[RMDB]
RNA sequence: GGGAACGACUCGAGUAGAGUCGAAAAGGUAGUCGACAACGGCGCGGGCCGGUUCCGGCAGGGCGCACAGGUACUCGUCGAUCACGCCGGACAGCGGCCGACGAUCCUCGUCUCGACAGCGCCACCGUGCCUACACACCUUUCGAGGUGUGUAGGCAAAAAGAAACAACAACAACAAC
Reactivity to DMS in 0.01 (KOAc 150mM, MgCl2 10mM, bicine 150mM(pH8.5), 24C), signal-to-noise 2, nucleotides 027 to 126: g010g010u010a070g000u010c020g020a050c210a070a080c140g000g010c000g020c060g030g000g020c000c000g020g000u020u000c030c000g000g000c010a150g010g010g020c040g010c270a080c080a010g000g020u040a100c180u020c050g020u010c010g020a130u000c090a080c120g010c000c000g000g010a030c300a070g000c020g000g000c010c010g000a030c020g000a110u000c050c060u000c140g000u000c070u000c070g010a030c070a110g000c030g000c010c000a160c100c040g000
Reactivity to 2A3 in 0.01 (KOAc 150mM, MgCl2 10mM, bicine 150mM(pH8.5), 24C), signal-to-noise 1, nucleotides 027 to 126: g030g030u040a010g000u000c060g020a050c030a090a000c080g010g070c020g000c020g020g000g070c010c010g050g060u150u020c040c020g000g000c100a140g050g020g010c000g070c060a010c050a040g220g050u100a180c040u060c110g040u020c000g020a050u130c040a020c120g040c000c080g000g020a000c080a040g080c040g010g000c010c000g010a020c020g000a010u210c030c000u000c000g070u010c010u020c100g060a050c040a030g000c020g020c020c000a050c040c000g090

Chemical mapping of a 177-nucleotide RNA with DMS and 2A3. DMS adducts were read by reverse transcription with MarathonRT.